[RMDB]
RNA sequence: GGGAACGACUCGAGUAGAGUCGAAAAGAAAGACAGCGGCCGUUGAGAUGAGAUUACCCCAUACCCUGUAGCGGCAGCUCGACUCCGUGCACGCGUAGGGGGCAAUCUCACCUCAACAGCUGCUCAAUAUCCUUAGCUUUUUCGAAAGCUAAGGAUAAAAAGAAACAACAACAACAAC
Reactivity to 2A3 in 0.01 (KOAc 150mM, MgCl2 10mM, bicine 150mM(pH8.5), 24C), signal-to-noise 9, nucleotides 027 to 126: g060a020a070a010g100a020c080a030g000c000g010g000c000c010g000u000u000g000a000g000a010u000g000a000g000a000u000u020a040c000c000c000c000a000u010a010c010c010c010u020g010u050a100g100c010g050g010c150a010g000c040u150c190g230a300c050u000c010c000g010u010g000c030a020c070g030c050g000u010a010g020g000g000g000g000c000a000a000u000c000u000c000a000c000c000u000c000a000a000c000a000g000c000u000g000c000u000c000a030a060
Reactivity to DMS in 0.01 (KOAc 150mM, MgCl2 10mM, bicine 150mM(pH8.5), 24C), signal-to-noise 6, nucleotides 027 to 126: g010a110a090a110g010a140c210a010g010c000g020g010c000c040g020u000u000g010a010g000a020u010g010a010g000a020u010u000a070c000c000c000c000a080u000a010c010c030c120u010g010u000a140g020c010g000g000c230a010g000c030u020c290g010a170c010u000c000c000g010u000g000c000a010c130g010c300g020u000a010g000g000g000g000g010c030a000a000u000c000u000c010a010c020c000u000c000a000a000c010a020g000c000u000g000c000u000c070a050a090
An RNA of 177 nucleotides, treated with 2A3 and DMS and read out base by base. The RNA was probed in 150 mM KOAc, 10 mM MgCl2 and 150 mM bicine (pH 8.5) at 24 C. The data come from the RNA Mapping Database (RMDB), libraries RFM100 and RFMREP.